Chemical mapping of a 207-nucleotide RNA with 2A3. For 2A3, 702 sequencing reads were counted. High 2A3 reactivity points to a flexible backbone, as in loops and unpaired stretches.
RNA sequence: GGGAACGACUCGAGUAGAGUCGAAAACGGCAUCGAUAUGGUUGAUUGGUCGGAGGACUGGCCAACCAGGUCGUCUAAGGAGGGACGUACUGGCCCAGGGCGGAAACGCAGCAGGCAAAAGUCCCCGUGUGGAGCAGUAGUGGGAUAGCGCCUGUGACCGGUAAAAGAGGUUCGCCUCUUUUACCGGAAAAGAAACAACAACAACAAC
Reactivity to 2A3 in 0.01 (KOAc 150mM, MgCl2 10mM, bicine 150mM(pH8.5), 24C), signal-to-noise 1, nucleotides 027 to 156: c060g050g040c010a060u100c080g050a070u010a080u210g000g010u020u060g020a110u010u070g040g030u010c040g010g180a080g020g090a050c020u030g020g000c010c010a030a030c000c030a010g030g050u010c000g000u020c010u020a070a050g040g040a070g000g070g000a050c020g000u200a040c010u030g030g000c010c010c090a020g030g010g000c040g030g000a060a030a000c020g000c040a000g000c010a000g010g000c000a110a000a000a110g010u000c000c010c000c000g020u060g030u050g110g030a020g010c060a080g030u130a040g030u240g080g000g000a020u030a050g050c070g020c010c000u030g000u020g030a030